An RNA of 177 nucleotides, treated with DMS and 2A3 and read out base by base.
RNA sequence: GGGAACGACUCGAGUAGAGUCGAAAAACUCCGAAGUUCGCUUCGGAGUAAAAUGGGCCCGAAGUCGCACAUGAAACGGUCAAGUCGCGAUAAAUAAAAUAAAAAUCGAGAGCUUCGGCUCUCGAAACAAAACGAUAUCUUUCGAGAUAUCGUUUUGAAAAGAAACAACAACAACAAC
Reactivity to DMS in 0.01 (KOAc 150mM, MgCl2 10mM, bicine 150mM(pH8.5), 24C), signal-to-noise 3, nucleotides 027 to 126: a030c000u000c000c000g010a000a020g000u000u040c230g020c000u010u000c000g000g000a020g010u010a000a050a060a040u000g020g030g020c010c010c020g020a110a150g000u000c040g030c020a010c090a090u000g020a050a150a090c230g020g010u000c030a040a040g000u000c130g050c020g000a020u000a050a090a100u030a040a060a100a120u010a030a050a100a080a110u010c010g000a010g010a010g010c000u000u020c240g020g000c000u000c000u000c000g000a000a050a080
Reactivity to 2A3 in 0.01 (KOAc 150mM, MgCl2 10mM, bicine 150mM(pH8.5), 24C), signal-to-noise 3, nucleotides 027 to 126: a000c000u000c000c000g000a030a000g010u060u170c140g040c140u000u000c000g000g010a000g000u000a010a010a000a000u030g020g050g050c010c000c000g000a070a010g040u030c010g010c020a000c010a050u060g070a100a200a130c110g060g120u030c030a060a000g010u010c050g010c020g020a010u030a030a110a010u040a030a030a020a000u160a020a150a010a010a010u030c000g000a000g000a000g010c010u070u070c280g120g000c000u000c000u000c000g000a000a000a000

Source: RMDB library M2PK50, as collected in RNAgym. Values are in units of 0.01, from 0 to 300, in steps of 10. The reactions ran in a buffer of 150 mM KOAc, 10 mM MgCl2 and 150 mM bicine (pH 8.5), at 24 C. For 2A3 the reverse transcriptase was SuperScript II with manganese. The 2A3 profile rests on 3,149 reads.